Record summary: This 207-nucleotide RNA was probed chemically with 2A3 and DMS. The DMS profile rests on 7,003 reads. High 2A3 reactivity points to a flexible backbone, as in loops and unpaired stretches. The reactions ran in a buffer of 150 mM KOAc, 10 mM MgCl2 and 150 mM bicine (pH 8.5), at 24 C.

[RMDB]
RNA sequence: GGGAACGACUCGAGUAGAGUCGAAAACUCGCGAGCCCAUAGAGGCGUGGGGAGCGACAUGAAUCAGCCUCGAUUAGAUGUGGUCGACUGUACAGCGGCGUACAGCGACCUAGUUAGAAGCCGCAAAACCGGAAGAGAUGACGCUCGACGGACGUCAGAUAGUAGUGGGAUUCGUCCCACUACUAUCAAAAGAAACAACAACAACAAC
Reactivity to 2A3 in 0.01 (KOAc 150mM, MgCl2 10mM, bicine 150mM(pH8.5), 24C), signal-to-noise 6, nucleotides 027 to 156: c030u030c000g000c020g030a300g170c010c000c000a010u030a020g030a010g000g010c010g000u000g000g010g000g000a040g020c020g050a050c070a160u240g110a090a140u140c050a040g000c000c000u010c030g020a100u140u200a090g120a150u160g130u140g110g000u010c000g020a300c010u000g000u020a000c010a050g000c000g020g010c000g000u000a000c000a000g000c010g000a000c000c000u000a010g000u000u030a060g020a160a020g010c010c000g000c000a020a040a040a090c090c040g050g040a160a010g020a040g010a070u130g050a030c040g010c070u030c070g060a060c010g040g000a010c010g020u080c050a030
Reactivity to DMS in 0.01 (KOAc 150mM, MgCl2 10mM, bicine 150mM(pH8.5), 24C), signal-to-noise 3, nucleotides 027 to 156: c030u000c020g030c000g030a140g030c020c010c020a210u000a070g010a080g010g050c030g050u000g010g020g010g000a130g000c020g000a160c100a130u000g020a150a070u000c070a080g000c010c000u000c020g020a140u010u000a130g010a100u000g010u010g010g000u000c010g010a140c010u000g000u010a020c020a170g010c120g020g040c110g020u000a000c020a080g020c000g010a010c010c000u010a010g020u000u010a130g010a120a060g020c000c010g010c040a110a060a100a100c050c050g010g010a090a090g010a150g010a130u000g000a020c000g010c010u000c020g020a130c030g000g010a040c010g010u010c020a080